[RMDB]
RNA sequence: GGGAACGACUCGAGUAGAGUCGAAAACUUCCGAUCCACCUUAUCGCGGAAACCGCUGUAGCCCUGCGCGUCCGUCCCGGACAUGCCGCCGAUCUGGAGCGUCGAGCCAUUCGGGAAGAUGAUGUCCGAUACUGCUGCAGUUCGCUGCAGCAGUAUCAAAAGAAACAACAACAACAAC
Reactivity to DMS in 0.01 (KOAc 150mM, MgCl2 10mM, bicine 150mM(pH8.5), 24C), signal-to-noise 2, nucleotides 027 to 126: c070u000u040c020c000g000a100u020c020c030a090c050c010u000u020a050u010c060g030c050g000g020a060a060a060c040c060g000c080u000g020u000a070g000c010c030c010u000g030c080g010c050g010u000c000c070g000u030c040c000c000g000g020a040c080a030u030g000c070c030g030c040c000g020a020u000c010u020g010g010a060g030c060g010u030c040g000a100g000c010c020a050u010u000c010g000g000g040a140a070g000a080u030g020a050u020g010u000c000c060
Reactivity to 2A3 in 0.01 (KOAc 150mM, MgCl2 10mM, bicine 150mM(pH8.5), 24C), signal-to-noise 6, nucleotides 027 to 126: c020u050u020c010c000g060a050u040c020c010a040c020c020u120u110a100u140c040g010c010g100g000a100a070a030c030c020g030c030u040g070u130a040g020c000c000c020u040g030c030g000c010g040u000c010c020g050u020c010c000c000g000g010a030c010a030u110g020c010c010g010c000c010g030a030u010c030u080g040g050a040g050c020g040u080c040g060a040g020c020c000a020u060u070c040g020g010g030a040a060g030a060u210g030a020u060g050u030c050c040
Chemical mapping of a 177-nucleotide RNA with DMS and 2A3. For DMS, 4,456 sequencing reads were counted.